[RMDB]
RNA sequence: GGGAACGACUCGAGUAGAGUCGAAAAGCAUCAACUUGCUGCGAGAUCCAGUUGAUCUGCGCAAUAUCAGCAGCUUCUGCAGCAAACAGUCGCUGCAGAAUAUUGCCGGCACCGAAGCCAGUGAACGCCCUCCUCUCUUAUUCGUAAGAGAGGAGGGAAAAGAAACAACAACAACAAC
Reactivity to DMS in 0.01 (KOAc 150mM, MgCl2 10mM, bicine 150mM(pH8.5), 24C), signal-to-noise 4, nucleotides 027 to 126: g010c080a030u000c070a110a050c090u000u000g000c050u010g010c070g010a100g000a080u000c050c120a120g000u000u010g000a030u010c030u010g040c090g030c080a050a040u000a070u000c100a130g020c010a040g000c100u000u000c000u000g010c010a030g010c070a070a120a120c200a070g000u000c110g000c000u000g000c010a000g000a010a020u000a040u000u000g040c010c050g020g000c100a080c060c060g020a060a100g020c010c040a070g010u010g000a090a130c250g000
Reactivity to 2A3 in 0.01 (KOAc 150mM, MgCl2 10mM, bicine 150mM(pH8.5), 24C), signal-to-noise 3, nucleotides 027 to 126: g040c020a090u060c040a010a050c000u070u100g000c030u060g010c030g060a040g000a040u040c030c100a090g030u110u150g070a040u010c010u100g070c010g010c050a010a070u070a070u170c080a020g030c010a000g010c000u010u000c010u010g030c020a070g000c020a000a100a130c080a030g220u170c060g000c020u010g000c010a020g010a010a020u060a020u000u040g020c030c000g030g000c020a040c030c040g110a030a010g000c010c010a010g050u020g110a050a030c070g010

Conditions: 150 mM KOAc, 10 mM MgCl2 and 150 mM bicine (pH 8.5), 24 C. The record gives the reactivity of an RNA of 177 nucleotides to DMS and 2A3. The 2A3 profile rests on 2,872 reads. 2A3 adducts were read by reverse transcription with SuperScript II with manganese.